Notes: Source: RMDB library TTRINS, as collected in RNAgym. An RNA of 177 nucleotides, treated with DMS and 2A3 and read out base by base. For 2A3 the reverse transcriptase was SuperScript II with manganese. Conditions: 150 mM KOAc, 10 mM MgCl2 and 150 mM bicine (pH 8.5), 24 C.

[RMDB]
RNA sequence: GGGAACGACUCGAGUAGAGUCGAAAAGAUAUGGACUUAACUACCCACCCAUCUCAUUUGAACUACCAGCCUCUCUCGGAAACGAGAGGGGGACUGGCAAAUGAGAUGGAGGUUAAGUCCUAAGUCAGUACUCUUCUAGGUUCGCCUAGAAGAGUACAAAAGAAACAACAACAACAAC
Reactivity to DMS in 0.01 (KOAc 150mM, MgCl2 10mM, bicine 150mM(pH8.5), 24C), signal-to-noise 2, nucleotides 027 to 126: g000a140u010a100u010g010g000a000c010u000u020a000a020c020u010a170c020c010c020a300c130c000c000a000u000c010u000c000a010u000u000u010g010a110a100c260u000a300c050c010a000g030c000c000u010c000u000c000u010c000g000g010a060a030a230c040g000a010g020a040g000g010g030g000g000a000c000u000g060g000c000a010a000a000u010g010a000g000a010u000g020g010a010g000g000u010u010a000a020g010u000c010c000u000a000a050g010u000c130a160
Reactivity to 2A3 in 0.01 (KOAc 150mM, MgCl2 10mM, bicine 150mM(pH8.5), 24C), signal-to-noise 2, nucleotides 027 to 126: g120a060u240a180u300g020g020a000c010u000u000a010a000c030u300a300c020c070c070a040c010c010c000a030u000c010u000c010a040u000u020u010g110a210a180c140u130a100c300c000a040g090c040c000u000c000u020c010u000c010g020g020a040a080a090c010g000a000g010a000g000g000g030g000g010a040c010u010g010g040c000a010a000a000u010g010a000g010a020u000g000g010a000g000g000u000u000a010a010g020u000c000c000u000a030a010g180u040c150a010